[RMDB]
Conditions: 150 mM KOAc, 10 mM MgCl2 and 150 mM bicine (pH 8.5), 24 C. Chemical mapping of a 207-nucleotide RNA with 2A3. Reactivities are given for positions 27 through 156. For 2A3 the reverse transcriptase was SuperScript II with manganese.

RNA sequence: GGGAACGACUCGAGUAGAGUCGAAAAAGACAACAGAAUAUAUAUACAUAUGUAGAUUUUGAUGAAAGUGACGGGUAUAUUAAAGAUAUCAUACUUAAGCGUGUUCAUAAAACGUUAGGAGCUAAGAAAGAUGGCUAUCAACAUAGCUUAGCUUUUACGUCCUAACCUUUUUCGAAAGGUUAGGACGAAAAGAAACAACAACAACAAC
Reactivity to 2A3 in 0.01 (KOAc 150mM, MgCl2 10mM, bicine 150mM(pH8.5), 24C), signal-to-noise 1, nucleotides 027 to 156: a000g000a030c030a080a020c010a090g120a090a030u090a040u050a030u070a000u180a260c070a000u300a160u260g040u200a030g000a080u080u170u140u300g070a090u030g000a000a170a000g040u040g040a030c040g000g040g110u020a090u000a090u120u230a080a000a000g120a010u050a010u080c070a020u010a110c050u040u040a030a000g030c000g050u000g030u040u000c030a010u080a100a140a000a000c010g000u000u000a050g040g000a000g010c020u010a030a000g000a100a060a000g080a010u070g030g020c040u050a030u110c030a000a030c010a040u010a000g020c000u030u050a010g000c000u020u020u010u020a030